[RMDB]
Source information:
The record gives the reactivity of an RNA of 207 nucleotides to 2A3. It was measured as part of the RMDB library OK3TST. The RNA was probed in 150 mM KOAc, 10 mM MgCl2 and 150 mM bicine (pH 8.5) at 24 C.

RNA sequence: GGGAACGACUCGAGUAGAGUCGAAAAUAUAAUUGACUACAACUGGUUGCAGUUGACAUGCUAAUUGCAUACGCAGCGUCGUAAUAUUAUGCGCAAUGUCGUACGUAGCCAGUCAUACGCGGUAUGUAUGCGUUAACCAGCUAUGUGAUGCUGCACAUCUCGGUGCAACGUUCGCGUUGCACCGAGAAAAAGAAACAACAACAACAAC
Reactivity to 2A3 in 0.01 (KOAc 150mM, MgCl2 10mM, bicine 150mM(pH8.5), 24C), signal-to-noise 1, nucleotides 027 to 156: u090a050u160a050a060u100u070g040a000c160u070a150c030a160a060c090u240g120g000u050u030g100c010a000g030u040u040g050a040c020a000u020g080c020u240a180a000u120u080g000c080a060u080a070c140g040c010a070g140c000g010u220c020g000u080a020a020u200a180u300u050a060u160g000c030g000c120a140a170u040g160u140c100g070u000a000c000g050u000a000g010c000c020a000g000u000c040a020u040a050c000g000c000g130g000u260a000u300g000u010a030u100g000c000g000u010u050a010a010c060c000a070g000c010u050a060u050g070u080g000a050u050g000c000u020g020c000a000c000a040